[RMDB]
RNA sequence: GGGAACGACUCGAGUAGAGUCGAAAAUGACUGAAGCCUGCUCGGUCAGAGCGAACCCGUAACAGCGAACAACAUCGUUCGUUUCUCCCGUCAAGCCGCCCCCGUGGCUGCCUGACACUCUUAACGGGGCAACCAGACUGUUCGCAGUCUGGUUGCCAAAAGAAACAACAACAACAAC
Reactivity to 2A3 in 0.01 (KOAc 150mM, MgCl2 10mM, bicine 150mM(pH8.5), 24C), signal-to-noise 1, nucleotides 027 to 126: u290g010a050c030u120g000a130a010g000c010c050u000g000c060u000c000g000g070u080c020a020g000a000g010c010g000a010a000c000c000c000g010u020a210a080c040a070g000c040g060a000a000c000a100a060c000a120u210c070g030u000u000c000g010u010u030u010c090u010c000c010c030g040u030c000a000a010g040c000c000g060c000c010c000c000c020g090u240g000g000c000u000g010c040c000u020g000a000c020a100c030u170c010u080u000a090a000c000g040g030